[RMDB]
RNA sequence: GGGAACGACUCGAGUAGAGUCGAAAAUCCGUGCCGUUCGCGGCACGGAAAACCGAUGGUAGUGUGGGGUCUCCGCAUGCGAGAGUAGGGAACUGCCAGGCAAAAGCUGUGGCUUCGGCCACAGCAAGUCGCAUUAUAUGUUCGCAUAUAAUGCGACAAAAGAAACAACAACAACAAC
Reactivity to 2A3 in 0.01 (KOAc 150mM, MgCl2 10mM, bicine 150mM(pH8.5), 24C), signal-to-noise 2, nucleotides 027 to 126: u000c000c000g000u010g020c000c000g040u070u050c300g030c010g110g080c000a000c000g020g000a010a000a010a010c000c000g060a100u030g020g030u010a050g000u020g060u100g060g090g020g030u010c030u020c040c020g040c110a130u160g020c080g040a060g010a020g080u220a070g070g020g000a030a020c030u010g030c000c000a060g040g090c060a070a050a030a050g010c000u000g000u000g020g000c000u010u030c180g050g000c000c000a000c000a000g020c010a010a010
Reactivity to DMS in 0.01 (KOAc 150mM, MgCl2 10mM, bicine 150mM(pH8.5), 24C), signal-to-noise 3, nucleotides 027 to 126: u010c000c000g040u000g040c010c010g020u000u020c210g030c040g030g030c000a020c000g000g000a010a010a100a140c020c020g010a100u010g000g010u000a020g010u000g010u010g010g000g000g000u000c040u000c010c030g030c160a060u010g020c080g020a080g000a050g020u000a110g020g000g000a160a070c030u010g010c030c010a070g000g020c120a070a080a090a130g000c010u000g010u000g000g000c000u000u000c170g060g010c000c000a010c010a010g000c000a000a030
Structure probing data (2A3 and DMS) for a 177-nucleotide construct. Reactivities are given for positions 27 through 126. Source: RMDB library M2PK50, as collected in RNAgym. The 2A3 profile rests on 3,887 reads. The reactions ran in a buffer of 150 mM KOAc, 10 mM MgCl2 and 150 mM bicine (pH 8.5), at 24 C.